[RMDB]
RNA sequence: GGGAACGACUCGAGUAGAGUCGAAAAACUUGAAGGAUUGUGAAUCAUCAUUCUAGCAACCGGACUCAUUUCGAUGUGGUCACCAGCCAUUGCGAUAAGCGAUGCCGCACUUGCUGCUAUUGCUGUGGAGCGUUACUGAGUUCGCUCAGUAACGCUCAAAAGAAACAACAACAACAAC
Reactivity to 2A3 in 0.01 (KOAc 150mM, MgCl2 10mM, bicine 150mM(pH8.5), 24C), signal-to-noise 2, nucleotides 027 to 126: a010c000u040u070g000a040a020g090g000a030u010u090g040u120g180a140a060u050c000a000u000c000a020u060u010c010u020a000g020c000a040a020c090c000g040g010a020c000u010c050a100u010u140u040c090g030a020u090g020u040g040g010u090c030a010c090c010a020g000c030c010a030u060u000g020c000g050a080u060a200a040g010c000g130a100u110g070c000c020g000c020a040c020u110u220g030c010u000g010c000u030a010u110u040g000c050u010g040u130g180
Reactivity to DMS in 0.01 (KOAc 150mM, MgCl2 10mM, bicine 150mM(pH8.5), 24C), signal-to-noise 2, nucleotides 027 to 126: a080c110u000u010g010a030a040g000g010a070u000u000g040u000g040a200a150u000c090a010u000c030a070u010u010c020u010a040g030c030a050a080c130c080g000g000a100c040u010c020a100u000u000u000c040g010a110u010g050u020g020g000u000c110a070c090c090a060g000c100c020a050u000u000g000c030g010a100u000a090a090g010c060g030a050u000g000c060c100g020c050a090c140u000u000g010c000u000g040c060u000a060u010u010g010c030u000g000u010g020
Structure probing data (2A3 and DMS) for a 177-nucleotide construct.
The RNA was probed in 150 mM KOAc, 10 mM MgCl2 and 150 mM bicine (pH 8.5) at 24 C.
For 2A3 the reverse transcriptase was SuperScript II with manganese.
Source: RMDB library OK2TRN, as collected in RNAgym.